[RMDB]
RNA sequence: GGGAACGACUCGAGUAGAGUCGAAAAUGACAUUUGAGCAUGAAGACGGUGCCGAUACUAUGGCGCGGAUACUAUUACAGGGCGAUUCCUCACAAAUUGAGUUUUGGGUUAAUAAGGAGAAAGCGCAUGGACUAUCGGACUUCUUUGCGGAUUUGGCGGAUAUCUAUAGCUUCGGCUAUAGAUAUCCAAAAGAAACAACAACAACAAC
Reactivity to 2A3 in 0.01 (KOAc 150mM, MgCl2 10mM, bicine 150mM(pH8.5), 24C), signal-to-noise 2, nucleotides 027 to 156: u120g020a030c030a030u120u140u110g040a040g010c050a050u090g060a010a040g010a030c060g040g070u110g150c000c000g020a010u020a040c020u070a030u150g130g000c000g000c000g020g020a020u030a070c010u020a040u090u030a030c020a050g070g020g000c020g050a040u060u130c000c020u020c020a050c020a040a140a050u070u090g020a040g100u040u040u050u060g020g000g010u050u070a100a070u100a160a120g060g000a100g070a090a060a000g030c030g000c010a000u000g000g030a040c060u040a040u030c000g000g000a000c000u050u000c000u050u050u060g040c030g030g080a060u090u000u000g060g030c020
Reactivity to DMS in 0.01 (KOAc 150mM, MgCl2 10mM, bicine 150mM(pH8.5), 24C), signal-to-noise 2, nucleotides 027 to 156: u010g010a060c050a130u010u000u000g040a080g020c070a080u000g000a100a060g020a050c060g000g020u000g030c000c010g000a050u000a110c060u000a090u010g030g040c040g040c020g000g010a210u000a070c090u010a050u000u010a090c030a090g030g010g040c020g000a190u000u000c050c010u000c090a080c060a040a060a050u010u000g030a190g020u010u010u000u000g000g000g020u000u000a050a110u000a040a090g000g020a070g000a090a130a300g020c020g020c010a050u000g020g010a070c130u020a040u010c040g010g010a170c050u000u000c020u010u000u010g000c010g000g000a110u000u000u010g010g020c300

Chemical mapping of a 207-nucleotide RNA with 2A3 and DMS. The DMS profile rests on 4,088 reads. Source: RMDB library OK3TST, as collected in RNAgym. The 2A3 profile rests on 1,886 reads. For DMS the reverse transcriptase was MarathonRT.